[RMDB]
Structure probing data (DMS and 2A3) for a 177-nucleotide construct.
RNA sequence: GGGAACGACUCGAGUAGAGUCGAAAAGAUAUGGACAUCUUUCGCUUGGAUUUACUAUGUGGUCGGAAACGACCACAAACGUUGUCAGCGACAGAUGUCCUAAGUCAAAGAGCUCUUCGGAGCUCAACCUUUCCUCAUUGUUCGCAAUGAGGAAAGGAAAAGAAACAACAACAACAAC
Reactivity to DMS in 0.01 (KOAc 150mM, MgCl2 10mM, bicine 150mM(pH8.5), 24C), signal-to-noise 2, nucleotides 027 to 126: g000a020u000a300u000g010g000a020c000a010u000c000u000u000u010c000g000c010u000u000g020g020a030u000u000u000a020c000u000a300u000g000u000g000g010u000c000g020g010a120a090a290c010g000a000c000c010a010c000a000a010a080c250g000u000u000g000u000c010a030g020c000g000a020c030a010g010a000u000g010u000c000c000u010a030a120g000u000c050a100a160a130g000a010g000c000u000c000u000u010c120g020g000a040g020c000u000c000a000a050
Reactivity to 2A3 in 0.01 (KOAc 150mM, MgCl2 10mM, bicine 150mM(pH8.5), 24C), signal-to-noise 2, nucleotides 027 to 126: g020a010u060a030u160g020g000a000c000a010u000c000u020u030u000c000g030c010u050u170g180g020a130u300u300u050a020c010u020a010u060g000u010g010g000u000c010g010g020a070a080a030c010g000a010c000c000a000c000a000a000a000c020g020u030u010g040u060c030a000g030c000g000a000c000a010g000a000u000g000u000c000c000u000a000a000g000u000c000a000a000a150g010a020g000c000u010c000u110u150c300g180g000a000g000c000u000c000a000a000

The RNA was probed in 150 mM KOAc, 10 mM MgCl2 and 150 mM bicine (pH 8.5) at 24 C. DMS adducts were read by reverse transcription with MarathonRT. The DMS profile rests on 1,897 reads.